[RMDB]
RNA sequence: GGGAACGACUCGAGUAGAGUCGAAAAGCGGGGCUUGAAACGCGGGUAGCGGGCACGCCCGGCGAAGAAGUUCGCAUACGCGGUGUGCUGGUGCCGAAGUGUCUGCUGCAACGGCACGCUCGACACCUAGAACAUACCGUAUUCGUACGGUAUGUAAUAGCUAUAUUGCGUUCGCGCAAUAUAGCUAAAAAGAAACAACAACAACAAC
Reactivity to 2A3 in 0.01 (KOAc 150mM, MgCl2 10mM, bicine 150mM(pH8.5), 24C), signal-to-noise 3, nucleotides 027 to 156: g020c050g010g010g030g060c030u090u100g100a060a120a030c040g010c020g000g030g030u050a010g010c020g020g010g000c000a000c000g000c000c000c010g000g000c010g000a010a000g040a060a010g230u040u010c010g010c030a040u080a240c060g060c180g040g000u010g000u020g010c030u020g020g050u050g000c010c010g030a050a030g020u040g020u040c080u100g030c030u060g020c070a120a030c020g010g000c000a020c010g000c030u040c020g000a010c000a020c010c010u040a050g050a120a010c000a000u000a000c000c000g000u000a000u020u100c110g050u000a000c010g000g000u000a000u010g000u000a000a070
Reactivity to DMS in 0.01 (KOAc 150mM, MgCl2 10mM, bicine 150mM(pH8.5), 24C), signal-to-noise 2, nucleotides 027 to 156: g000c070g010g000g020g040c080u000u020g030a080a100a060c060g000c020g030g030g000u010a080g020c040g020g020g010c030a050c060g010c000c010c040g030g010c000g000a060a070g010a170a120g010u000u000c030g010c010a090u010a210c070g020c060g060g040u020g030u000g010c050u010g000g000u000g020c010c030g000a010a140g000u000g010u000c030u040g000c060u010g020c200a160a170c140g000g010c010a020c010g010c120u000c010g030a080c010a020c000c000u010a190g030a140a040c010a020u010a020c000c010g000u000a060u000u020c300g000u020a020c000g000g030u000a010u000g010u000a050a150
The data come from the RNA Mapping Database (RMDB), library M2RFOK. The record gives the reactivity of an RNA of 207 nucleotides to 2A3 and DMS. DMS adducts were read by reverse transcription with MarathonRT.